This 207-nucleotide RNA was probed chemically with 2A3. The data come from the RNA Mapping Database (RMDB), library RNAMAK. The 2A3 profile rests on 1,357 reads. For 2A3 the reverse transcriptase was SuperScript II with manganese.
[RMDB]
RNA sequence: GGGAACGACUCGAGUAGAGUCGAAAAUCCUAAGUCAUGCACGAAGCGUCGAAGAACAGAUCGCAAGGGAGUCGGAAACGACUCCUGAUGACCGAUCUGGGAGACGUCAAGUGCAUGAUAUGGAAAAUCCUGUGCAGUGUUCGCACUGCACAGGAAACUCAAAUCACAGGUUCGCCUGUGAUUUGAGAAAAGAAACAACAACAACAAC
Reactivity to 2A3 in 0.01 (KOAc 150mM, MgCl2 10mM, bicine 150mM(pH8.5), 24C), signal-to-noise 2, nucleotides 027 to 156: u000c000c000u020a070a020g010u000c010a000u010g040c000a000c030g220a300a030g000c000g010u000c020g060a240a060g010a050a000c000a010g010a010u000c010g000c110a300a280g000g000g000a010g010u000c020g000g040a110a100a150c010g010a000c010u000c000c020u000g000a030u050g010a060c140c020g010a000u020c000u000g010g000g010a010g000a000c010g020u050c020a030a000g000u000g010c000a010u000g000a000u000a010u010g000g030a050a100a000a150u010c000c000u000g000u000g000c000a000g000u000g050u070u220c280g190c130a000c000u010g000c010a000c010a040g000g000a010a000a000

The RNA was probed in 150 mM KOAc, 10 mM MgCl2 and 150 mM bicine (pH 8.5) at 24 C.